[RMDB]
RNA sequence: GGGAACGACUCGAGUAGAGUCGAAAAGAGGCUGUCCACAUAUGUAGCAGCAGGCCUGGGCUUCCUCCUGAAUGCCAUGAAGGACCCCAACCAGCAAGUUCGGCACACCACUGCAUGGGCCAUAGGCGAAUUACGAGACAUUCGUGUCUCGUAAUUCAAAAGAAACAACAACAACAAC
Reactivity to DMS in 0.01 (KOAc 150mM, MgCl2 10mM, bicine 150mM(pH8.5), 24C), signal-to-noise 5, nucleotides 027 to 126: g010a110g010g020c050u000g010u010c030c040a060c140a150u010a060u000g030u020a110g010c030a060g010c040a060g000g000c060c050u000g000g010g010c040u000u000c030c030u000c040c050u000g010a080a080u010g010c020c050a060u010g000a080a080g000g000a120c200c010c010c050a080a100c060c070a060g000c070a070a090g000u000u000c090g020g010c040a060c090a060c060c030a080c060u000g010c040a080u000g010g000g000c020c030a080u000a070g000g020c130
Reactivity to 2A3 in 0.01 (KOAc 150mM, MgCl2 10mM, bicine 150mM(pH8.5), 24C), signal-to-noise 3, nucleotides 027 to 126: g110a010g050g000c030u020g010u100c080c010a060c030a050u300a040u240g080u090a040g030c050a010g000c000a010g010g090c030c060u040g000g000g010c000u070u030c010c000u020c010c020u060g080a150a050u140g020c020c020a040u100g100a060a040g020g030a080c000c000c010c010a020a040c020c010a000g060c020a080a040g020u070u100c040g030g000c020a010c010a010c020c010a040c040u040g000c020a100u050g010g000g000c010c010a100u100a090g070g000c070
Source: RMDB library OK2TST, as collected in RNAgym. This 177-nucleotide RNA was probed chemically with DMS and 2A3. For 2A3 the reverse transcriptase was SuperScript II with manganese. Conditions: 150 mM KOAc, 10 mM MgCl2 and 150 mM bicine (pH 8.5), 24 C. Values are in units of 0.01, from 0 to 300, in steps of 10. DMS adducts were read by reverse transcription with MarathonRT. The DMS profile rests on 5,074 reads. Reactivities are given for positions 27 through 126.